[RMDB]
RNA sequence: GGGAACGACUCGAGUAGAGUCGAAAAGGACCAGCUGAGGGGUCCGACAUAGCCUCAGCAUCUAGCCUGUCACUCACCAGGCGAAUCAAGUGAGUGUUGAUGCUUUUGCAUCUUAAUCUGACUGAGUCGUAGCAGUCUCAUGAACUAUGACAUUAGAGGAUAUAGGCGUAUUCGUACGCCUAUAUCCAAAAGAAACAACAACAACAAC
Reactivity to DMS in 0.01 (KOAc 150mM, MgCl2 10mM, bicine 150mM(pH8.5), 24C), signal-to-noise 1, nucleotides 027 to 156: g000g090a040c010c000a170g030c000u030g010a090g020g110g010g020u030c000c010g000a050c210a070u000a150g040c000c020u010c020a020g080c000a080u000c080u010a170g010c000c000u000g020u000c050a030c030u000c040a070c070c030a000g070g040c010g020a060a050u000c090a080a000g000u010g010a030g010u000g010u010u000g020a140u010g010c000u000u000u000u020g020c010a110u000c030u030u000a090a180u000c080u000g000a110c030u010g020a170g000u010c010g030u010a070g020c010a090g030u020c050u040c060a070u000g000a030a100c020u000a030u000g000a020c040a210u000u020a070g010a220
Reactivity to 2A3 in 0.01 (KOAc 150mM, MgCl2 10mM, bicine 150mM(pH8.5), 24C), signal-to-noise 3, nucleotides 027 to 156: g010g000a000c000c000a000g000c000u010g000a000g030g000g010g000u000c000c000g030a000c030a050u150a040g040c010c010u000c000a000g020c000a010u040c020u050a050g000c000c000u030g020u070c010a000c010u000c000a010c010c000a000g040g000c070g030a020a060u100c020a080a020g020u010g010a000g000u010g010u010u100g000a010u000g000c050u080u240u250u300g000c000a000u000c000u020u130a120a060u060c110u180g030a000c010u000g000a000g020u010c000g000u000a000g000c010a000g000u020c080u080c190a110u190g020a060a060c000u000a010u020g000a000c000a000u050u170a100g040a050